RNA sequence: GGGAACGACUCGAGUAGAGUCGAAAACCUGGUUUAGGGUUCCAGGCUAGCCCUAUCUAUCGGUCGAGAUGCGAGCGAUUAAGCUCAAAUUGAGUGGCUGAGUUAGUGGUGAACGUAUCCCUAUGUUAAAACGGUAGCUGCUUCGGCAGCUACCGAAGUAUUAAUACGUCUUCGGACGUAUUAAUACAAAAGAAACAACAACAACAAC
Reactivity to DMS in 0.01 (KOAc 150mM, MgCl2 10mM, bicine 150mM(pH8.5), 24C), signal-to-noise 4, nucleotides 027 to 156: c020c000u000g010g030u000u000u000a070g040g030g000u000u000c020c000a070g020g040c030u010a300g000c000c000c010u010a030u010c030u010a070u000c010g070g030u000c010g000a300g020a040u010g020c300g020a060g020c010g020a260u010u000a090a200g020c000u000c000a050a250a060u000u000g010a240g010u010g000g010c000u000g010a050g010u000u000a050g010u000g050g010u020g000a100a110c060g020u010a080u010c020c010c010u000a170u000g000u000u000a050a090a120a200c010g000g000u000a010g020c000u000g000c000u000u010c300g060g010c010a000g010c000u000a010c000c020g000a000a020
Reactivity to 2A3 in 0.01 (KOAc 150mM, MgCl2 10mM, bicine 150mM(pH8.5), 24C), signal-to-noise 5, nucleotides 027 to 156: c010c000u010g020g010u050u070u060a030g000g010g000u070u020c010c010a010g020g010c030u020a020g000c000c010c000u010a020u000c020u040a140u050c010g010g010u010c020g020a020g010a150u020g020c010g000a000g010c010g110a140u200u300a140a060g000c000u000c010a000a030a010u010u020g000a030g040u220g030g000c000u010g000a000g010u010u020a050g010u120g160g010u040g020a090a030c040g040u080a100u100c000c000c010u020a050u080g070u040u140a060a110a010a020c010g000g000u000a000g000c000u010g020c000u040u060c190g090g000c000a000g010c000u000a000c000c000g000a000a000